RNA sequence: GGGAACGACUCGAGUAGAGUCGAAAAUAUGUCAUUUGGUGUGCGUACAUCAGGUGGCACAACUUUCUCUAUGUCGCCACAUAGUGGAAGUGAACUCAGUGCUGUACGCACAGUUCUGAGUGACCUUUGCUACUGUAGCGACAGUGGUAAAGAAGUACGAGUCCACUCUGUUCGCAGAGUGGAUUCGAAAAGAAACAACAACAACAAC
Reactivity to DMS in 0.01 (KOAc 150mM, MgCl2 10mM, bicine 150mM(pH8.5), 24C), signal-to-noise 3, nucleotides 027 to 156: u010a020u010g020u010c010a000u000u000u000g030g050u010g000u000g010c300g040u010a110c000a010u000c000a030g030g020u000g010g010c010a030c030a090a110c050u000u000u000c010u000c010u010a110u000g010u010c070g020c100c050a130c010a060u000a040g020u000g010g010a010a020g020u000g010a190a050c030u000c010a060g020u000g000c010u010g010u000a130c300g020c230a090c020a030g000u000u000c010u000g010a020g020u000g010a180c300c000u000u000u000g000c000u000a010c040u010g010u000a080g020c100g020a110c000a010g010u000g010g000u000a030a060a040g000a060a080g000u000a150
Reactivity to 2A3 in 0.01 (KOAc 150mM, MgCl2 10mM, bicine 150mM(pH8.5), 24C), signal-to-noise 7, nucleotides 027 to 156: u300a060u050g000u000c000a000u010u010u010g030g010u030g010u060g130c220g090u210a020c000a000u000c010a010g000g020u010g010g030c010a000c020a020a070c010u030u070u030c040u000c000u020a080u060g000u000c010g020c030c010a000c000a010u010a000g020u040g160g040a020a020g020u050g090a010a000c000u000c010a010g010u000g020c000u010g020u070a080c120g030c130a010c010a000g000u030u010c000u000g010a010g010u040g050a090c010c000u000u000u000g000c000u000a050c150u020g000u010a010g020c010g030a010c000a010g000u040g010g000u090a100a060a050g050a060a020g040u050a040

Source: RMDB library OK3TST, as collected in RNAgym. An RNA of 207 nucleotides, treated with DMS and 2A3 and read out base by base. For 2A3, 12,529 sequencing reads were counted. The reactions ran in a buffer of 150 mM KOAc, 10 mM MgCl2 and 150 mM bicine (pH 8.5), at 24 C.